The record gives the reactivity of an RNA of 207 nucleotides to DMS and 2A3. The DMS profile rests on 2,537 reads. 2A3 adducts were read by reverse transcription with SuperScript II with manganese.
[RMDB]
RNA sequence: GGGAACGACUCGAGUAGAGUCGAAAAAUACUUCUCAGGAUGGCGCGUUGCAGUCCAACAAGAUCCAGGGACUGUAGAGAAUUUUCCUAUACCUCGAGUCGGGUUUGGAAUCUAAGGUUGACUCGCUAAAACUUUACGUGGUUCGCCACGUAAAGAAGACAGUAUAGAACUUCGGUUCUAUACUGUCAAAAGAAACAACAACAACAAC
Reactivity to DMS in 0.01 (KOAc 150mM, MgCl2 10mM, bicine 150mM(pH8.5), 24C), signal-to-noise 1, nucleotides 027 to 156: a050u000a070c100u010u020c060u000c020a180g020g000a100u010g010g040c080g000c120g020u000u000g050c020a020g010u000c020c010a080a150c040a120a170g020a090u000c030c020a230g000g010g020a040c050u000g000u010a070g020a100g000a090a080u000u000u000u000c010c020u000a120u010a060c110c030u040c040g000a050g030u000c070g030g000g040u000u020u000g010g010a040a030u000c030u020a070a120g000g000u010u000g010a140c070u000c010g050c070u020a050a100a020a160c000u000u000u000a010c000g020u020g010g030u000u000c300g040c010c000a010c010g030u000a010a000a010g000a090a120
Reactivity to 2A3 in 0.01 (KOAc 150mM, MgCl2 10mM, bicine 150mM(pH8.5), 24C), signal-to-noise 4, nucleotides 027 to 156: a000u090a040c020u050u030c020u010c020a030g150g030a100u100g060g040c020g010c030g100u050u060g010c020a020g020u020c020c010a050a070c070a110a120g110a120u100c090c040a040g020g030g020a000c000u020g020u070a020g000a010g010a090a060u040u040u030u030c010c000u030a040u050a110c000c020u000c040g010a010g010u010c030g000g000g000u030u040u040g020g010a050a010u000c030u090a130a070g100g040u100u110g040a020c010u010c020g020c030u080a100a110a020a070c000u010u000u000a000c000g000u000g000g050u020u030c140g040c050c000a000c000g000u000a000a000a000g000a010a000